[RMDB]
RNA sequence: GGGAACGACUCGAGUAGAGUCGAAAAGAUAUGGAACGUGCUACCCACCUUAAUAGUGCAACAGCUUGUCUCGGAAACGAGACAAGACAUGCACUUCUAAGAGGCACGUUCCUAAGUCAAACUUAUUCACGCCUUCUUCGGAAGGCGUGAAUAAGAAGAGGAAGUUAAGGUUCGCCUUAACUUCCUCAAAAGAAACAACAACAACAAC
Reactivity to 2A3 in 0.01 (KOAc 150mM, MgCl2 10mM, bicine 150mM(pH8.5), 24C), signal-to-noise 2, nucleotides 027 to 156: g070a030u270a130u220g000g000a010a010c000g000u000g010c000u150a300c000c000c050a020c050c000u040u010a070a000u040a090g020u000g020c040a100a050c030a130g040c000u000u000g000u010c000u000c010g050g000a030a080a050c000g000a000g020a000c000a000a000g000a000c000a030u020g000c000a000c000u020u000c020u000a000a000g000a040g010g010c000a000c010g020u000u000c000c010u010a020a020g040u030c100a080a010a110c000u000u000a000u000u000c000a000c050g010c020c000u010u000c000u110u180c210g070g000a010a010g000g010c000g000u020g000a000a000u000a000a000g000a000a000
Reactivity to DMS in 0.01 (KOAc 150mM, MgCl2 10mM, bicine 150mM(pH8.5), 24C), signal-to-noise 1, nucleotides 027 to 156: g000a110u010a220u000g070g010a020a020c020g020u000g010c000u000a130c000c040c020a300c090c000u000u000a000a130u010a030g010u000g010c010a050a150c080a110g010c010u000u000g010u000c000u000c000g030g010a140a110a190c010g050a010g030a000c000a010a000g010a000c020a300u000g000c000a000c010u000u000c070u000a040a010g010a190g010g000c010a020c000g000u000u000c000c000u000a020a070g000u010c030a060a060a150c000u020u000a000u000u010c000a010c000g070c040c000u010u000c030u000u000c300g030g000a040a000g020g030c050g000u000g000a010a000u000a000a000g010a080a130
Annotation
Chemical mapping of a 207-nucleotide RNA with 2A3 and DMS. As a SHAPE reagent, 2A3 marks flexible, mostly unpaired nucleotides at the ribose 2'-OH. Source: RMDB library RNAMAK, as collected in RNAgym. In probing experiments dimethyl sulfate is read out at A N1 and C N3, which are open when not base-paired. DMS adducts were read by reverse transcription with MarathonRT.